[RMDB]
Source: RMDB library M2RFPK, as collected in RNAgym. This 207-nucleotide RNA was probed chemically with 2A3. For 2A3 the reverse transcriptase was SuperScript II with manganese. The reactions ran in a buffer of 150 mM KOAc, 10 mM MgCl2 and 150 mM bicine (pH 8.5), at 24 C. The 2A3 profile rests on 615 reads.
RNA sequence: GGGAACGACUCGAGUAGAGUCGAAAAGAAAGAGAGUUAGACACGGUUGAUCUCUCCCUUCGGGGGGGCUAUAGAGAUCACUGGAAGCACUACCGGACAACCGGAACAUUGCAGCAAUGCAGCCCAAAAAAUCCAAACAUCUUCGGAUGUUUGGAAACCAUAAGUCAUCGUUCGCGAUGACUUAUGGAAAAGAAACAACAACAACAAC
Reactivity to 2A3 in 0.01 (KOAc 150mM, MgCl2 10mM, bicine 150mM(pH8.5), 24C), signal-to-noise 1, nucleotides 027 to 156: g110a030a020a010g070a000g030a010g000u110u170a020g010a090c050a030c070g000g000u050u130g070a020u020c010u000c010u030c000c000c010u050u110c290g030g000g000g040g010g010g000c030u120a110u130a090g000a010g000a010u020c010a000c000u010g000g050a060a000g000c050a030c050u130a090c030c000g060g000a070c110a270a200c030c010g040g020a010a010c010a010u110u140g020c030a030g030c010a020a030u010g000c000a000g050c020c040c030a000a100a100a000a000a000u000c000c000a010a010a010c000a000u000c000u030u010c110g170g000a000u000g000u000u010u000g000g000a020a020a020